Chemical mapping of a 177-nucleotide RNA with DMS and 2A3. Values cover nucleotides 27 to 126. It was measured as part of the RMDB library TTRDEL. The reactions ran in a buffer of 150 mM KOAc, 10 mM MgCl2 and 150 mM bicine (pH 8.5), at 24 C.
RNA sequence: GGGAACGACUCGAGUAGAGUCGAAAAGAUAUGGAGAAGAGCUUGGACCAUACGAUCGGAAACGAUCGUUAUGCUAGCUCCUCCUAAGUCAAAGCAUGUUAAAGUUCUUCGGAACUUUAACAUGCAAGUGUUCAUGCACGUUCGCGUGCAUGAACACAAAAGAAACAACAACAACAAC
Reactivity to DMS in 0.01 (KOAc 150mM, MgCl2 10mM, bicine 150mM(pH8.5), 24C), signal-to-noise 1, nucleotides 027 to 126: g010a030u000a300u000g010g040a000g020a160a120g010a020g000c010u000u000g050g000a100c300c010a030u000a020c000g050a000u000c000g040g000a140a030a200c010g000a000u000c000g000u000u010a010u000g000c070u020a010g020c000u000c000c020u000c000c010u000a020a080g040u000c110a110a120a230g010c000a000u010g000u000u010a010a010a010g010u000u000c000u000u020c140g000g010a000a000c000u000u000u000a000a000c000a010u000g000c000a010a020
Reactivity to 2A3 in 0.01 (KOAc 150mM, MgCl2 10mM, bicine 150mM(pH8.5), 24C), signal-to-noise 1, nucleotides 027 to 126: g030a000u110a030u180g040g010a030g010a300a080g010a030g000c000u120u170g090g130a100c100c000a040u030a110c000g000a010u000c020g010g000a090a100a030c000g000a000u010c000g010u050u070a000u000g020c010u010a000g020c040u020c000c000u040c020c010u020a140a010g050u070c050a130a060a020g000c030a000u020g000u020u020a000a000a030g000u040u000c010u080u120c300g040g010a000a020c040u000u000u000a000a020c000a020u000g000c000a000a000